About this RNA: Chemical mapping of a 177-nucleotide RNA with 2A3 and DMS. 2A3 adducts were read by reverse transcription with SuperScript II with manganese. Conditions: 150 mM KOAc, 10 mM MgCl2 and 150 mM bicine (pH 8.5), 24 C.
[RMDB]
RNA sequence: GGGAACGACUCGAGUAGAGUCGAAAAAAUGGUGUCAAUUUCCGGUCGACAGAUCUCAGAGAGAACCUCAGCGGCCCAGUUUUUCCUUUUUUGCCUUGUGUGAAAGGGAAUUUAACACUCUGCCUUGAUAUUUAGCAUUUUUCGAAAUGCUAAAUAUAAAAGAAACAACAACAACAAC
Reactivity to 2A3 in 0.01 (KOAc 150mM, MgCl2 10mM, bicine 150mM(pH8.5), 24C), signal-to-noise 9, nucleotides 027 to 126: a000a010u170g020g000u050g030u040c040a050a060u050u070u000c020c000g010g010u030c010g020a050c020a060g050a080u030c020u030c110a040g070a010g010a020g020a150a070c010c010u030c030a020g020c020g030g010c010c010c000a010g010u040u000u000u020u060c030c000u110u150u020u010u040u070g040c020c010u260u220g110u090g010u010g190a030a000a010g020g010g020a000a010u090u090u060a070a010c020a000c020u070c050u040g030c000c000u020u060g040
Reactivity to DMS in 0.01 (KOAc 150mM, MgCl2 10mM, bicine 150mM(pH8.5), 24C), signal-to-noise 8, nucleotides 027 to 126: a050a040u010g000g010u010g000u000c060a070a090u010u000u000c070c080g010g020u000c040g000a090c130a080g010a080u010c020u020c050a130g010a140g010a150g000a090a100c060c030u000c080a080g000c050g010g000c020c020c050a070g000u010u010u000u000u000c010c000u010u010u000u010u010u020g040c000c020u020u010g020u030g040u000g000a010a010a020g000g000g000a020a010u010u020u010a050a050c050a090c060u010c070u000g010c050c020u000u010g010